[RMDB]
RNA sequence: GGGAACGACUCGAGUAGAGUCGAAAAGUCGCCGCGUCUACAUCAACGCCCAGCGCGGGCGAGGGAAGCGUCCUACGGGGGUGCCCCAUUCGCCGGCAUGGCAGAGGACGGCAAGAUUGCCGCGACGGACUACGUACGGGUUCGCCCGUACGUAGUCAAAAGAAACAACAACAACAAC
Reactivity to DMS in 0.01 (KOAc 150mM, MgCl2 10mM, bicine 150mM(pH8.5), 24C), signal-to-noise 1, nucleotides 027 to 126: g000u000c030g010c010c190g020c010g010u010c000u030a100c110a170u000c020a050a220c080g010c050c000c120a090g020c180g000c130g000g010g030c000g010a020g000g000g000a110a110g000c040g030u000c010c010u020a100c220g020g000g010g040g000u000g050c060c020c000c060a130u000u020c020g000c020c040g000g000c010a100u000g020g040c070a100g000a190g000g000a090c030g010g040c130a040a110g000a070u000u010g040c000c240g020c010g000a030c090g020
Reactivity to 2A3 in 0.01 (KOAc 150mM, MgCl2 10mM, bicine 150mM(pH8.5), 24C), signal-to-noise 1, nucleotides 027 to 126: g000u000c020g000c020c000g000c000g010u040c000u040a080c010a150u070c010a090a100c030g020c000c010c000a110g110c300g040c100g300g000g010c000g000a020g000g060g000a140a030g000c030g060u000c000c020u060a150c180g060g000g060g000g140u060g000c000c000c000c000a080u040u090c020g000c000c000g010g000c070a070u060g010g000c010a000g030a070g100g020a050c000g000g000c030a000a010g030a080u200u300g000c000c030g000c010g020a010c000g000